The data come from the RNA Mapping Database (RMDB), library OK1LIB. This 177-nucleotide RNA was probed chemically with 2A3 and DMS. DMS adducts were read by reverse transcription with MarathonRT.
RNA sequence: GGGAACGACUCGAGUAGAGUCGAAAAGACUGGCGUGGAUAUGGGAAUGAGUACCGUAAACCAUAUCCACGGUACUCAAGCCAGAGCAGGCGUACCUAUACCAUAGCCUGCGAAGGUAUAGGAUAGAGGGAUGGGUGGUGUUCGCAUUACCCAUCCCAAAAGAAACAACAACAACAAC
Reactivity to 2A3 in 0.01 (KOAc 150mM, MgCl2 10mM, bicine 150mM(pH8.5), 24C), signal-to-noise 9, nucleotides 027 to 126: g070a050c040u060g020g070c010g000u020g010g010a010u010a010u020g030g020g050a110a150u110g050a100g140u110a120c050c060g050u080a120a080a060c020c010a020u010a010u010c000c010a000c000g000g010u030a030c020u040c090a100a010g010c010c000a010g000a010g060c040a020g020g000c030g040u060a100c000c030u070a050u050a160c020c040a110u160a060g020c000c000u010g010c010g010a050a020g020g000u030a030u060a070g050g020a030u070a100g130a120
Reactivity to DMS in 0.01 (KOAc 150mM, MgCl2 10mM, bicine 150mM(pH8.5), 24C), signal-to-noise 9, nucleotides 027 to 126: g000a170c030u000g000g010c000g020u000g000g000a030u000a010u010g000g010g020a130a130u030g010a140g020u020a060c100c080g010u020a070a100a270c030c020a030u000a000u010c020c020a020c000g000g010u010a020c060u010c090a100a130g000c000c000a030g000a300g010c070a100g000g000c020g000u010a070c040c040u010a040u010a050c090c050a080u030a120g010c010c000u000g000c050g000a140a070g000g010u000a030u010a030g000g010a150u020a060g020a300
Conditions: 150 mM KOAc, 10 mM MgCl2 and 150 mM bicine (pH 8.5), 24 C. For 2A3, 34,996 sequencing reads were counted.